[RMDB]
RNA sequence: GGGAACGACUCGAGUAGAGUCGAAAAGAUGCCCAGGUCGGACCGCGGGGAGGUGGAGAUGCCAUGCCGACCCGAAGAGGAAAGAAGGACUCGGACGCGAACCCGUAAGGUGAAACUUUCACAUUUAGACGAAGCUUGUUCGCAAGCUUCAAAAGAAACAACAACAACAAC
Reactivity to 2A3 in 0.01 (KOAc 150mM, MgCl2 10mM, bicine 150mM(pH8.5), 24C), signal-to-noise 5, nucleotides 027 to 129: g090a050u170g020c000c000c010a010g040g060u060c020g010g010a060c010c000g000c010g030g000g000g010a010g000g010u050g030g020a100g010a050u160g050c010c020a040u110g040c000c020g020a030c000c000c000g020a020a010g040a010g020g010a060a040a020g010a000a010g010g010a000c000u010c040g000g010a010c020g010c020g020a040a050c000c000c010g030u090a050a050g040g010u020g030a040a050a060c060u100u160u090c050a060c020a120u120u140u160a090g020a050c080
Reactivity to DMS in 0.01 (KOAc 150mM, MgCl2 10mM, bicine 150mM(pH8.5), 24C), signal-to-noise 8, nucleotides 027 to 129: g020a090u050g010c010c000c010a130g020g040u040c000g020g020a060c060c050g040c040g040g010g010g040a080g020g040u000g010g010a060g020a130u000g000c110c070a070u060g030c010c010g050a110c030c020c050g040a070a060g030a030g000g000a080a010a040g010a070a020g010g010a060c090u000c000g000g000a030c090g000c110g030a060a060c020c050c010g030u000a040a030g030g050u020g000a060a080a100c130u020u010u010c000a000c090a130u040u030u070a100g000a130c150

Chemical mapping of a 170-nucleotide RNA with 2A3 and DMS. The 2A3 profile rests on 31,737 reads. DMS adducts were read by reverse transcription with MarathonRT. The reactions ran in a buffer of 150 mM KOAc, 10 mM MgCl2 and 150 mM bicine (pH 8.5), at 24 C. Source: RMDB library 15KLIB, as collected in RNAgym. 2A3 adducts were read by reverse transcription with SuperScript II with manganese.